[RMDB]
RNA sequence: GGGAACGACUCGAGUAGAGUCGAAAAUGCUACACCCACUACACGUAAUUACCGGUGUAGCUAAGGUAGUUACGACAACUGAUCCGAGAGGAUCUACAUUAAGGCGAAGGUGUAAUAUAGGUUAAUAGGCACCUGAAGCCGACCCUAUUAACCAACAGGGUAGGAUAUGAUUCGUCAUAUCCUACCCAAAAGAAACAACAACAACAAC
Reactivity to DMS in 0.01 (KOAc 150mM, MgCl2 10mM, bicine 150mM(pH8.5), 24C), signal-to-noise 2, nucleotides 027 to 156: u000g000c020u000a020c000a070c010c000c110a140c070u000a140c110a110c040g030u030a050a090u000u000a060c080c110g000g060u010g060u010a040g010c110u000a060a090g040g000u000a000g020u000u000a040c030g030a050c080a060a180c140u000g010a060u000c000c040g010a300g030a300g020g020a010u010c010u000a020c120a100u020u010a160a140g000g060c000g010a100a100g020g010u000g000u000a090a170u000a090u000a090g000g030u020u000a020a020u000a000g000g000c020a030c020c020u000g010a090a270g020c070c010g000a060c220c000c010u020a000u010u000a010a000c010c000a140a110c160a290
Reactivity to 2A3 in 0.01 (KOAc 150mM, MgCl2 10mM, bicine 150mM(pH8.5), 24C), signal-to-noise 3, nucleotides 027 to 156: u080g010c000u020a010c040a080c010c050c020a050c100u180a050c150a010c020g070u090a060a060u160u070a090c010c030g040g020u180g030u020a030g020c030u030a090a010g050g000u000a010g010u020u060a010c020g050a060c110a150a040c140u080g010a010u000c000c010g040a040g000a020g120g000a000u000c000u030a010c000a060u180u170a080a040g000g030c070g020a010a020g000g000u050g010u040a090a040u100a040u100a220g000g010u010u000a010a000u010a020g000g000c000a000c000c030u010g060a040a030g040c040c000g010a020c000c000c000u010a000u000u000a010a020c000c010a020a080c040a070
Source: RMDB library OK3TST, as collected in RNAgym. Structure probing data (DMS and 2A3) for a 207-nucleotide construct. As a SHAPE reagent, 2A3 marks flexible, mostly unpaired nucleotides at the ribose 2'-OH. For DMS the reverse transcriptase was MarathonRT.